[RMDB]
RNA sequence: GGGAACGACUCGAGUAGAGUCGAAAAGGUGCUGUGUGAGGCCGGGCUACUACCUGGUGCCCUGACCCGCAACGUGGGAUUGCACUUCAUCUGCCGGGAUGUGUGGCUGCGGGUAGCGUCGACGUCGGUAAACUACCCUGUUCGCAGGGUAGUUUACAAAAGAAACAACAACAACAAC
Reactivity to DMS in 0.01 (KOAc 150mM, MgCl2 10mM, bicine 150mM(pH8.5), 24C), signal-to-noise 3, nucleotides 027 to 126: g020g020u010g000c030u010g020u000g030u000g000a090g030g030c040c040g020g000g010c050u000a080c080u010a120c130c070u020g000g040u000g000c020c030c010u010g030a090c020c020c010g010c050a040a050c180g010u000g020g010g000a170u000u000g000c050a060c030u010u000c050a050u000c040u000g020c070c040g000g000g030a050u000g000u000g010u020g010g010c050u000g020c050g000g000g010u000a050g000c150g000u000c040g010a060c120g030u000c100g030
Reactivity to 2A3 in 0.01 (KOAc 150mM, MgCl2 10mM, bicine 150mM(pH8.5), 24C), signal-to-noise 2, nucleotides 027 to 126: g070g000u040g000c020u020g010u030g050u100g090a090g010g080c040c050g070g030g000c050u140a070c010u030a070c090c060u100g030g000u060g000c010c000c010u060g080a110c020c000c000g000c030a070a070c080g060u110g030g040g060a110u060u190g010c030a000c000u080u040c020a110u030c030u070g030c060c000g000g060g000a110u070g100u050g050u110g110g000c030u070g020c030g040g000g000u020a070g020c060g030u030c030g040a040c080g070u100c040g030